Conditions: 150 mM KOAc, 10 mM MgCl2 and 150 mM bicine (pH 8.5), 24 C. The record gives the reactivity of an RNA of 177 nucleotides to 2A3 and DMS.
[RMDB]
RNA sequence: GGGAACGACUCGAGUAGAGUCGAAAAAUAGAGCUUGUCGAUGCAGAAUUCGCUGCGAUGCGUGUUGCCCGUCACGUCGAUCAGCAGAUUGCGCAGCACGCGAUCGACGAGCCACGGCGGCAUGUCAGAGGAGUGGUACUUUCGAGUACCACUCCUCAAAAGAAACAACAACAACAAC
Reactivity to 2A3 in 0.01 (KOAc 150mM, MgCl2 10mM, bicine 150mM(pH8.5), 24C), signal-to-noise 2, nucleotides 027 to 126: a020u110a040g070a000g050c040u010u010g010u030c000g020a010u170g000c030a020g060a140a300u300u200c210g050c100u010g000c030g140a120u180g000c000g010u000g000u000u010g020c000c050c000g000u030c020a090c080g090u090c060g040a240u080c070a000g060c000a050g040a050u030u140g000c070g000c080a010g000c000a000c020g000c000g020a040u010c000g010a010c000g000a020g000c010c000a040c040g020g040c000g020g000c070a040u150g040u120c060a010
Reactivity to DMS in 0.01 (KOAc 150mM, MgCl2 10mM, bicine 150mM(pH8.5), 24C), signal-to-noise 2, nucleotides 027 to 126: a080u010a040g000a200g000c000u000u000g050u000c010g000a050u000g000c020a030g000a140a200u000u000c170g000c010u000g010c020g000a100u000g020c010g000u000g000u000u000g030c070c080c190g010u000c040a070c120g110u010c090g000a060u000c110a190g000c090a040g000a060u000u030g050c180g000c050a070g010c010a070c090g010c000g000a020u000c000g010a010c000g000a060g010c020c000a080c140g010g000c020g030g000c020a050u030g010u000c110a110
For 2A3 the reverse transcriptase was SuperScript II with manganese. Source: RMDB library OK2TST, as collected in RNAgym.